RNA sequence: GGGAACGACUCGAGUAGAGUCGAAAAGAUAUGGAGCAAUCGAUGGACUUGGAUUUAUAACCGAACCGUACUCGGAAACGAGUACGUCCCGGUUAUUGUCAGUCUAAGAUUGCUCCUAAGUCAAACAGUACUGUUAGAUUCGUCUAACAGUACUGAAGCUUCGUGUCACUUUCGAGUGACACGAAGCAAAAGAAACAACAACAACAAC
Reactivity to 2A3 in 0.01 (KOAc 150mM, MgCl2 10mM, bicine 150mM(pH8.5), 24C), signal-to-noise 2, nucleotides 027 to 156: g010a000u070a030u150g010g010a000g020c000a000a020u010c030g090a190u300g020g000a040c040u080u160g150g020a070u300u300u070a020u020a000a000c000c000g010a090a030c030c000g020u000a000c000u010c000g030g050a060a040a050c010g020a000g000u000a010c000g010u010c030c020c000g000g000u010u000a000u020u010g000u010c010a000g000u010c010u010a000a000g000a000u000u000g000c000u000c000c000u000a000a000g000u000c000a000a010a080c010a000g000u000a000c000u040g010u010u000a020g000a010u010u120c250g020u000c140u000a000a000c000a010g000u000a000c000u000g000a020a000

An RNA of 207 nucleotides, treated with 2A3 and read out base by base. It was measured as part of the RMDB library RNAMAK. Reactivities are rounded to 0.1 and cut off at 0 and 3.